Chemical mapping of a 207-nucleotide RNA with 2A3.
The data come from the RNA Mapping Database (RMDB), library RNAMAK.
The reactions ran in a buffer of 150 mM KOAc, 10 mM MgCl2 and 150 mM bicine (pH 8.5), at 24 C.
2A3 adducts were read by reverse transcription with SuperScript II with manganese.
[RMDB]
RNA sequence: GGGAACGACUCGAGUAGAGUCGAAAAUCCUAAGUCGAAACUACCAAACAAGCGCGGUCUAAGACAGCUCUCGGAAACGAGAGCAAUGACGGACCGAACUACGCUUGCUAGGGGUUUCGAUAUGGAAAACCGAGAUAUGGUUCGCCAUAUCUCGGAACAGUACACCAGACUUCGGUCUGGUGUACUGAAAAGAAACAACAACAACAAC
Reactivity to 2A3 in 0.01 (KOAc 150mM, MgCl2 10mM, bicine 150mM(pH8.5), 24C), signal-to-noise 2, nucleotides 027 to 156: u000c010c000u020a090a000g000u000c000g020a000a000a020c060u300a300c020c010a070a100a000c000a000a000g000c020g000c010g010g020u000c000u080a110a150g100a160c020a300g260c010u000c000u000c000g030g000a090a100a060c000g010a000g010a000g000c000a030a030u030g010a000c050g010g020a020c000c000g030a020a030c090u160a010c060g000c000u000u040g000c000u020a010g040g010g000g000u000u020u000c000g000a000u000a050u030g050g090a070a050a000a060c000c000g000a010g020a000u000a000u000g040g060u080u110c260g040c050c010a000u010a000u000c010u000c000g000g000a000a010